[RMDB]
The record gives the reactivity of an RNA of 177 nucleotides to DMS.
DMS adducts were read by reverse transcription with MarathonRT.
It was measured as part of the RMDB library OK2TRN.
Conditions: 150 mM KOAc, 10 mM MgCl2 and 150 mM bicine (pH 8.5), 24 C.

RNA sequence: GGGAACGACUCGAGUAGAGUCGAAAAGGAUUUAUUUUAUUCGUCUAUGUAUGUUCCAAAUCGUUGAGCCAGUGAAUACUUACUGAGUACCUGCUGUGAACUAGACUGUUCUAAGCAUUGAGGAUGCACUAGUUUUGGGUUUCGACCCAAAACUAGUAAAAGAAACAACAACAACAAC
Reactivity to DMS in 0.01 (KOAc 150mM, MgCl2 10mM, bicine 150mM(pH8.5), 24C), signal-to-noise 2, nucleotides 027 to 126: g010g000a050u010u000u010a070u000u010u020u010a100u030u010c060g020u010c060u000a040u010g010u000a080u000g000u010u000c000c010a080a090a070u000c110g040u000u000g010a120g020c090c050a050g020u010g000a090a050u000a090c150u010u000a050c100u010g000a110g040u010a050c020c030u010g020c020u000g020u000g010a030a060c020u000a100g000a080c140u000g010u000u000c030u010a080a100g000c000a040u000u000g020a160g040g010a080u010g030c100